Source: RMDB library OK1LIB, as collected in RNAgym. Structure probing data (DMS and 2A3) for a 177-nucleotide construct. For DMS, 42,330 sequencing reads were counted. For 2A3 the reverse transcriptase was SuperScript II with manganese. The reactions ran in a buffer of 150 mM KOAc, 10 mM MgCl2 and 150 mM bicine (pH 8.5), at 24 C.
RNA sequence: GGGAACGACUCGAGUAGAGUCGAAAACUGCAGUACGUGUUGCAGAGGCCCCGCUCAAGGGGGAGAGCGGACGUACAGCUCGGAUGGGGAUCUGAGAUCUCAGCAACGGACUGCAUUUGAAUGCAGGGCGGUAUUCGUCCUUCGGGAUGGAUAUCGCAAAAGAAACAACAACAACAAC
Reactivity to DMS in 0.01 (KOAc 150mM, MgCl2 10mM, bicine 150mM(pH8.5), 24C), signal-to-noise 9, nucleotides 027 to 126: c060u000g000c020a030g020u000a030c030g010u010g020u020u010g020c010a080g000a300g000g000c090c030c000c000g000c100u020c120a080a110g010g010g000g000g010a080g000a130g000c020g000g010a070c110g000u010a070c150a120g000c010u010c020g000g000a060u010g010g020g000g000a090u000c020u010g000a070g000a070u010c010u000c020a050g010c050a100a130c050g000g010a070c000u000g000c000a030u010u020u020g000a080a060u010g000c070a050g000g000
Reactivity to 2A3 in 0.01 (KOAc 150mM, MgCl2 10mM, bicine 150mM(pH8.5), 24C), signal-to-noise 9, nucleotides 027 to 126: c030u030g000c010a010g010u060a060c060g080u100g080u220u070g010c030a010g020a020g190g030c020c010c000c000g000c010u120c060a200a250g030g000g000g010g010a040g000a000g000c010g000g030a020c040g040u120a070c030a070g020c020u030c020g050g010a060u090g030g050g050g110a020u000c020u050g040a030g030a120u050c020u000c020a030g010c020a040a060c010g030g030a020c010u010g000c000a010u080u060u160g130a130a050u130g030c070a050g070g090